This 177-nucleotide RNA was probed chemically with 2A3 and DMS. For 2A3 the reverse transcriptase was SuperScript II with manganese. Values cover nucleotides 27 to 126. Source: RMDB library OK2TST, as collected in RNAgym. For 2A3, 2,911 sequencing reads were counted. Conditions: 150 mM KOAc, 10 mM MgCl2 and 150 mM bicine (pH 8.5), 24 C. Reactivities are rounded to 0.1 and cut off at 0 and 3. For DMS, 10,293 sequencing reads were counted.
RNA sequence: GGGAACGACUCGAGUAGAGUCGAAAAAGCUAGGAAGUAUGCCGAUGCCAUGUGUGGGUUGAACCCAGAGUGUUGGAACCAGAUGUAUGACAAAUAUGUCUAUUCACAGUGUGAGGCGAUGCGUGAACUAUCAGCAUAGGUUCGCCUAUGCUGAUAGAAAAGAAACAACAACAACAAC
Reactivity to 2A3 in 0.01 (KOAc 150mM, MgCl2 10mM, bicine 150mM(pH8.5), 24C), signal-to-noise 3, nucleotides 027 to 126: a000g010c030u030a020g070g050a120a040g060u070a040u120g000c020c040g050a050u070g020c020c050a100u060g090u010g020u060g050g050g000u060u090g110a050a050c000c010c010a020g020a030g050u120g030u080u110g040g010a020a040c020c000a030g000a040u050g020u040a020u040g040a050c080a070a130a020u100a040u060g030u000c010u040a070u040u060c050a020c020a090g040u060g000u000g120a060g020g010c050g020a040u080g000c020g040u030g030a070a060
Reactivity to DMS in 0.01 (KOAc 150mM, MgCl2 10mM, bicine 150mM(pH8.5), 24C), signal-to-noise 7, nucleotides 027 to 126: a080g010c050u000a110g020g010a090a070g010u010a060u010g010c010c030g000a110u010g020c030c040a070u000g020u010g020u010g010g010g020u010u000g010a070a300c060c000c030a070g000a100g000u010g020u000u000g010g000a070a070c130c110a030g000a040u000g000u000a020u000g010a090c180a060a100a050u000a040u000g010u000c010u000a190u010u000c020a070c060a090g000u000g020u000g020a090g010g010c030g010a060u010g010c080g010u010g000a080a150